[RMDB]
RNA sequence: GGGAACGACUCGAGUAGAGUCGAAAACAAGAACGGCGAGCGCUUCGUGAACGAGCUGGACCUGCGCUCCGUCGUGUCGCAGGCGAUUAUCGCGCAGGACAACGUCUACCCCGGGUCCGGCGGCAGCAAAUCGGAUCCAGUUCGCUGGAUCCGAUUUAAAAGAAACAACAACAACAAC
Reactivity to 2A3 in 0.01 (KOAc 150mM, MgCl2 10mM, bicine 150mM(pH8.5), 24C), signal-to-noise 3, nucleotides 027 to 126: c050a010a070g120a140a000c050g010g000c020g020a010g010c000g000c020u140u150c060g160u080g100a100a060c060g010a040g010c000u040g010g010a050c000c010u010g000c000g000c020u020c060c030g010u020c000g000u010g010u030c020g010c190a100g080g000c020g040a080u100u230a140u300c010g000c020g000c020a020g120g000a000c020a070a060c070g000u000c040u080a090c000c010c010c010g050g000g000u010c030c000g010g000c000g010g000c040a020g030c020
Reactivity to DMS in 0.01 (KOAc 150mM, MgCl2 10mM, bicine 150mM(pH8.5), 24C), signal-to-noise 2, nucleotides 027 to 126: c190a120a140g020a130a110c060g020g030c030g060a090g040c010g000c070u010u020c130g020u030g020a090a080c080g010a230g040c050u010g000g000a030c030c040u000g020c000g010c010u010c160c030g000u000c030g020u000g020u010c050g000c030a150g000g000c030g000a120u010u090a080u010c060g000c000g000c040a120g000g000a070c050a140a080c090g000u000c100u000a270c040c000c000c000g000g000g020u000c000c000g000g000c000g000g020c100a100g000c190
An RNA of 177 nucleotides, treated with 2A3 and DMS and read out base by base.
DMS adducts were read by reverse transcription with MarathonRT.
Reactivities are given for positions 27 through 126.